An RNA of 177 nucleotides, treated with DMS and 2A3 and read out base by base. The reactions ran in a buffer of 150 mM KOAc, 10 mM MgCl2 and 150 mM bicine (pH 8.5), at 24 C. For DMS, 2,361 sequencing reads were counted. DMS adducts were read by reverse transcription with MarathonRT. For 2A3, 1,848 sequencing reads were counted. For 2A3 the reverse transcriptase was SuperScript II with manganese.
RNA sequence: GGGAACGACUCGAGUAGAGUCGAAAAUCGUCAGGUCGGAGCCCGUUCAAGCUCCAAAGGCUACUGUGGUGCCUCAAACCCCGGUUACUGCUGUCCGCCCCAAGAGGACAGUGGUUAGUGCGACACCCUUGACAGCUUGAUUCGUCAAGCUGUCAAGAAAAGAAACAACAACAACAAC
Reactivity to DMS in 0.01 (KOAc 150mM, MgCl2 10mM, bicine 150mM(pH8.5), 24C), signal-to-noise 3, nucleotides 027 to 126: u000c070g020u000c050a070g000g030u010c070g030g000a030g020c010c030c040g000u010u010c200a150a170g000c010u000c010c050a120a090a070g000g010c010u000a090c030u010g010u010g030g020u000g000c000c030u000c140a040a110a090c070c010c040c020g020g010u000u000a020c010u010g010c000u000g010u000c000c000g000c080c020c070c150a110a180g000a060g000g000a010c000a000g020u000g000g000u000u000a050g000u000g080c050g010a070c070a100c040c050
Reactivity to 2A3 in 0.01 (KOAc 150mM, MgCl2 10mM, bicine 150mM(pH8.5), 24C), signal-to-noise 2, nucleotides 027 to 126: u100c020g090u060c020a010g000g060u100c040g000g020a010g010c030c010c000g030u050u080c140a060a020g000c010u000c000c000a070a040a010g020g010c020u080a040c000u090g090u120g060g040u030g030c020c020u160c060a070a090a100c000c000c000c020g000g000u020u040a010c000u000g030c010u010g020u000c010c020g070c080c020c020c000a080a030g090a030g090g000a010c000a000g000u000g010g000u000u040a100g020u050g100c010g030a010c010a080c010c030